[RMDB]
RNA sequence: GGGAACGACUCGAGUAGAGUCGAAAAUAUGCAGGAACUUGCUCUUUUCGAAAUUCACAGCAAGCUGUGUACCUACUAUGACCAACUGCGCAUAGUGAACUUCGAUCGAUCCGUGGCACCGUGCAGCGUGUUCCUUUACCUUCGGGUAAAGGAACACAAAAGAAACAACAACAACAAC
Reactivity to 2A3 in 0.01 (KOAc 150mM, MgCl2 10mM, bicine 150mM(pH8.5), 24C), signal-to-noise 3, nucleotides 027 to 126: u120a030u030g000c010a000g040g030a100a080c040u010u040g020c010u000c020u130u110u070u070c000g110a090a100a140u230u140c100a060c020a060g020c050a120a000g030c000u030g010u010g010u020a050c000c000u030a030c010u080a050u180g090a140c040c010a130a100c120u160g020c000g000c110a040u030a050g000u010g030a040a020c010u090u060c020g070a050u040c070g010a040u010c050c020g050u050g060g000c030a030c030c020g070u050g010c040a030g040c030
Reactivity to DMS in 0.01 (KOAc 150mM, MgCl2 10mM, bicine 150mM(pH8.5), 24C), signal-to-noise 2, nucleotides 027 to 126: u010a040u010g010c030a080g000g000a100a280c010u000u000g000c050u010c060u000u010u010u010c070g010a010a070a050u010u000c040a050c120a110g010c040a040a050g000c020u000g000u000g000u000a080c100c090u000a060c100u000a030u000g000a060c070c030a030a060c080u000g010c090g010c050a060u000a040g000u000g000a080a060c100u000u000c020g020a060u010c080g000a060u000c050c080g020u000g020g010c070a090c040c040g020u000g030c070a120g010c150